[RMDB]
Chemical mapping of a 207-nucleotide RNA with 2A3. 2A3 is a SHAPE reagent: it acylates the 2'-hydroxyl of flexible nucleotides of all four kinds. The RNA was probed in 150 mM KOAc, 10 mM MgCl2 and 150 mM bicine (pH 8.5) at 24 C. For 2A3 the reverse transcriptase was SuperScript II with manganese. The data come from the RNA Mapping Database (RMDB), library OK3TST.
RNA sequence: GGGAACGACUCGAGUAGAGUCGAAAAAAAUAAGGAUAACACUGAACGGGAAAGAAGUAGACUUGAGUUUCCAGGCUGUUAGGAGAGCUAUACUCGACGGAGACGACGAUUACUCGAGCACUAACAAAGUCCGCACGUAUAUGAGAUAUUACGGCAAGCAAUCGCAGGAAUUCGUUCCUGCGAUUGCAAAAGAAACAACAACAACAAC
Reactivity to 2A3 in 0.01 (KOAc 150mM, MgCl2 10mM, bicine 150mM(pH8.5), 24C), signal-to-noise 1, nucleotides 027 to 156: a000a020a050u300a090a020g020g010a120u140a240a020c020a000c110u040g000a060a010c000g060g020g000a070a090a000g050a040a040g070u060a020g090a070c000u060u150g020a050g030u030u060u150c010c010a040g000g080c020u050g000u080u040a040g000g060a000g000a010g010c030u030a050u020a190c040u000c070g060a070c050g070g000a000g030a080c000g020a000c000g080a160u180u030a020c010u000c000g020a010g090c060a020c160u120a170a000c010a080a070a000g030u100c040c130g070c020a020c120g040u000a000u010a050u080g080a090g000a120u050a010u170u170a010c030g010g000c040a010a020